[RMDB]
RNA sequence: GGGAACGACUCGAGUAGAGUCGAAAAGUUGUGCUAUUAUGGUAUAUGAUGAUAUGAGUGAGUAUGAAGUAGUAGUACAAGGUACAGGUAAGGUGUAUGUUUCCUUAUUGAAAGAUGUAGUUAGUAAUAUGUAUAAGAUACUAGUAGAUGAGUAUGAACAUCUAUGCCUAUUCGUAGGCAUAGAUGUAAAAGAAACAACAACAACAAC
Reactivity to 2A3 in 0.01 (KOAc 150mM, MgCl2 10mM, bicine 150mM(pH8.5), 24C), signal-to-noise 5, nucleotides 027 to 156: g050u030u020g040u010g010c020u020a020u140u020a040u090g040g080u070a070u010a040u130g080a040u040g020a040u040a040u230g050a090g060u090g010a030g030u030a040u060g040a080a000g000u060a010g000u010a020g000u010a030c030a050a020g060g020u030a040c020a050g000g050u040a050a020g040g030u040g020u040a070u120g070u020u070u050c000c000u010u060a080u030u130g060a090a040a020g030a010u040g030u090a020g030u080u030a020g020u040a030a120u030a090u280g020u040a050u050a200a030g010a020u080a060c020u050a050g070u040a010g050a110u100g030a030g020u100a050u130g060a030
Reactivity to DMS in 0.01 (KOAc 150mM, MgCl2 10mM, bicine 150mM(pH8.5), 24C), signal-to-noise 4, nucleotides 027 to 156: g000u010u000g040u000g030c010u000a060u010u000a030u010g030g040u000a080u000a060u000g020a210u000g020a150u000a090u000g000a120g020u020g010a240g030u000a050u000g000a060a260g010u010a070g040u020a040g030u010a050c030a070a090g020g010u000a070c090a080g010g000u010a090a080g020g030u000g000u000a060u000g000u000u000u010c010c010u000u000a130u000u000g010a070a070a120g000a060u000g040u000a110g020u010u010a070g020u000a060a090u000a090u010g010u000a080u000a110a170g010a200u000a040c030u010a050g020u000a100g020a080u000g010a100g030u000a080u000g010a130
This 207-nucleotide RNA was probed chemically with 2A3 and DMS. For 2A3, 3,417 sequencing reads were counted. For DMS the reverse transcriptase was MarathonRT. The RNA was probed in 150 mM KOAc, 10 mM MgCl2 and 150 mM bicine (pH 8.5) at 24 C. 2A3 is a SHAPE reagent: it acylates the 2'-hydroxyl of flexible nucleotides of all four kinds.